[RMDB]
RNA sequence: GGGAACGACUCGAGUAGAGUCGAAAACUCCACGCUGGGUAAUGGACGACGGCGGCGUGUGGCGAACAGGGAUACCGGUAGUCAGUGUCUGGAACAUCCCAAGGGGCGGCGGAGCUAGCACCCCAACAAAACGGGCACAAGUUCGCUUGUGCCCGAACAGGGAUAGAAAGUUCGCUUUCUAUCCCUGAAAAGAAACAACAACAACAAC
Reactivity to DMS in 0.01 (KOAc 150mM, MgCl2 10mM, bicine 150mM(pH8.5), 24C), signal-to-noise 1, nucleotides 027 to 156: c030u000c040c010a070c030g020c010u020g010g030g050u000a050a120u010g020g000a060c050g010a020c030g030g010c060g000g030c040g010u000g030u010g040g050c050g030a040a110c020a140g010g000g000a110u000a150c050c040g010g050u000a110g030u020c060a110g030u000g010u010c050u010g010g030a070a100c090a180u020c000c000c030a100a070g020g000g050g010c050g030g010c050g000g020a180g020c040u010a110g000c010a070c000c000c000c000a090a140c100a060a010a060a220c010g000g010g000c000a030c000a040a040g000u010u000c240g000c010u000u000g030u000g010c000c000c000g020a000a020
Reactivity to 2A3 in 0.01 (KOAc 150mM, MgCl2 10mM, bicine 150mM(pH8.5), 24C), signal-to-noise 3, nucleotides 027 to 156: c010u040c010c010a040c020g050c030u070g020g010g040u120a130a130u100g060g030a060c050g020a000c030g040g090c040g010g010c010g010u110g020u060g060g040c040g030a080a040c070a080g020g000g020a020u060a120c030c020g030g040u060a020g050u010c070a040g060u040g030u100c030u040g030g000a060a050c030a080u010c030c000c010a050a080g030g000g000g000c000g000g010c030g030g030a060g030c030u010a010g010c020a070c010c000c020c010a020a020c040a020a080a020a030c020g000g000g000c000a000c000a000a000g000u020u080c100g030c210u020u000g000u000g000c010c000c000g000a000a000
Structure probing data (DMS and 2A3) for a 207-nucleotide construct. As a SHAPE reagent, 2A3 marks flexible, mostly unpaired nucleotides at the ribose 2'-OH. For DMS, 2,003 sequencing reads were counted. The reactions ran in a buffer of 150 mM KOAc, 10 mM MgCl2 and 150 mM bicine (pH 8.5), at 24 C. Values cover nucleotides 27 to 156.